[RMDB]
This 177-nucleotide RNA was probed chemically with 2A3 and DMS. The 2A3 profile rests on 2,150 reads. It was measured as part of the RMDB library OK1LIB. For 2A3 the reverse transcriptase was SuperScript II with manganese. The reactions ran in a buffer of 150 mM KOAc, 10 mM MgCl2 and 150 mM bicine (pH 8.5), at 24 C.
RNA sequence: GGGAACGACUCGAGUAGAGUCGAAAACUUGCGCCUUCUUAAACGAUACACCAUCCUCGUGAGCAGCGAGCAAACUGAGGAACUGACCGGAUGGAGGCACAUUUAUACGCUUCGUUAUCACGGGUUCAGCGCUCUACUAUUUCGAUAGUAGAGCGCUAAAAGAAACAACAACAACAAC
Reactivity to 2A3 in 0.01 (KOAc 150mM, MgCl2 10mM, bicine 150mM(pH8.5), 24C), signal-to-noise 3, nucleotides 027 to 126: c020u030u060g010c030g020c050c010u070u050c040u090u230a140a110a050c100g060a040u090a200c050a030c020c030a040u030c000c020u000c020g000u010g030a080g000c050a040g140c060g170a060g000c030a000a070a130c050u120g060a020g040g030a020a040c070u070g020a050c000c060g050g050a020u100g020g020a050g020g080c020a000c000a070u020u140u130a160u010a080c070g010c040u040u130c030g150u200u130a060u070c050a040c100g010g040g000u080u100c070
Reactivity to DMS in 0.01 (KOAc 150mM, MgCl2 10mM, bicine 150mM(pH8.5), 24C), signal-to-noise 1, nucleotides 027 to 126: c040u000u000g000c120g000c020c000u000u000c000u000u010a060a120a090c170g000a080u000a110c080a120c240c090a110u000c000c000u020c000g010u000g000a300g010c000a050g000c150g000a170g100c070a050a120a110c080u020g100a000g000g000a040a060c130u030g000a250c000c050g060g000a030u000g040g000a010g000g000c000a200c100a110u020u000u000a010u070a090c120g020c000u000u010c000g020u000u020a000u000c080a100c000g000g000g000u070u020c110